[RMDB]
RNA sequence: GGGAACGACUCGAGUAGAGUCGAAAAUCAAACGAUUUCGAUCGUUUGAAACGGACCACUCCUGCGGGAGUUAAGGCGAUACGGACAGCCGGGUCCACUGCCAGUCAUUCGGUUUCGACCGAAUGAAGUCUCAUCGGGAAUUCGUUCCCGAUGAGACAAAAGAAACAACAACAACAAC
Reactivity to DMS in 0.01 (KOAc 150mM, MgCl2 10mM, bicine 150mM(pH8.5), 24C), signal-to-noise 1, nucleotides 027 to 126: u000c000a000a000a000c000g010a020u000u000u010c180g080a040u000c010g020u000u000u000g000a010a080a130c220g010g020a030c000c020a080c010u010c000c000u000g060c180g050g020g020a010g020u000u010a090a060g000g020c010g000a130u010a070c120g000g000a130c030a300g000c000c000g010g000g010u000c000c070a060c140u030g040c010c000a110g000u000c000a010u000u000c000g020g000u000u000u000c170g020a070c000c000g000a000a000u000g010a050a030
Reactivity to 2A3 in 0.01 (KOAc 150mM, MgCl2 10mM, bicine 150mM(pH8.5), 24C), signal-to-noise 1, nucleotides 027 to 126: u020c000a000a000a010c020g010a010u030u070u170c200g050a010u010c000g000u000u030u000g020a040a020a010c070g010g000a000c010c000a010c010u000c000c010u090g050c300g080g000g000a000g000u050u170a060a020g000g000c010g000a040u060a150c090g110g060a010c030a050g010c020c020g030g020g000u000c010c000a010c000u030g090c030c010a020g060u000c010a000u000u000c000g000g040u020u050u120c170g090a030c010c010g000a000a010u000g020a030a020
Structure probing data (DMS and 2A3) for a 177-nucleotide construct. The RNA was probed in 150 mM KOAc, 10 mM MgCl2 and 150 mM bicine (pH 8.5) at 24 C.